[RMDB]
RNA sequence: GGGAACGACUCGAGUAGAGUCGAAAAGUGGAAGUUGUGGUAAUGAUUCCUGGCUUACAGGGAAUGCUAUCCAAGGGUUUGCCUGUGGAUGUGGGGCAUCAUAUACAGCUAAUGAUGUCGAAGUCCAAGACACGGCCGUUCGCGGCCGUGAAAAGAAACAACAACAACAAC
Reactivity to DMS in 0.01 (KOAc 150mM, MgCl2 10mM, bicine 150mM(pH8.5), 24C), signal-to-noise 3, nucleotides 027 to 129: g020u010g050g020a060a160g100u020u000g010u010g050g000u020a070a110u030g000a120u030u030c000c020u000g080g070c170u060u070a070c030a090g000g030g040a100a030u010g000c110u010a080u010c080c060a030a110g060g020g000u040u020u020g020c000c050u090g000u020g000g020a020u020g050u090g100g000g000g030c090a000u040c000a000u010a240u000a060c120a150g000c140u080a140a070u000g010a010u020g050u030c120g010a000a220g000u030c050c000a070a100g040a180
Reactivity to 2A3 in 0.01 (KOAc 150mM, MgCl2 10mM, bicine 150mM(pH8.5), 24C), signal-to-noise 2, nucleotides 027 to 129: g180u120g000g000a020a010g020u090u060g020u010g000g060u190a040a040u050g190a130u060u000c000c000u000g040g000c040u000u100a000c030a000g010g030g080a070a030u100g000c120u120a040u110c090c000a020a010g110g000g060u020u090u080g090c040c020u010g000u030g080g030a020u000g000u080g170g060g030g000c120a010u010c000a000u090a000u020a150c000a000g000c010u140a170a000u000g000a000u000g000u030c000g030a060a060g040u050c000c040a000a000g050a030